[RMDB]
RNA sequence: GGGAACGACUCGAGUAGAGUCGAAAAGUCGAGCGCACGUCGCCGAGGUUGGCGGUACGGGAGAAAAGUUCGACGCCGUCCACGACUUUCCACGCGGCUGCUUGGUCGGCGACUUCAAAGCCGAUGAGCCACGGGAUAAUUUCGAUUAUCCCGUGGCAAAAGAAACAACAACAACAAC
Reactivity to 2A3 in 0.01 (KOAc 150mM, MgCl2 10mM, bicine 150mM(pH8.5), 24C), signal-to-noise 3, nucleotides 027 to 126: g050u010c020g010a040g080c040g000c000a080c100g030u040c010g030c000c000g000a000g060g200u080u090g020g040c000g000g050u120a070c040g000g030g060a100g040a000a150a010a020g040u110u110c030g040a060c010g050c020c040g020u020c000c010a070c040g100a100c030u080u060u000c060c020a150c040g120c040g040g050c010u060g020c020u050u060g050g010u000c000g000g000c010g030a030c000u090u100c090a030a040a000g010c000c000g040a020u050g010a000
Reactivity to DMS in 0.01 (KOAc 150mM, MgCl2 10mM, bicine 150mM(pH8.5), 24C), signal-to-noise 1, nucleotides 027 to 126: g000u000c020g000a070g000c000g000c070a220c140g000u000c010g020c010c000g000a100g010g000u000u030g010g000c080g000g030u040a040c000g030g000g050a110g000a050a000a060a090g000u010u000c040g060a110c060g000c050c000g000u000c000c010a250c040g030a090c020u000u000u010c000c040a080c140g000c000g030g010c050u010g030c000u000u010g000g000u010c000g000g020c000g010a040c130u000u030c190a030a060a200g000c000c000g030a050u000g050a100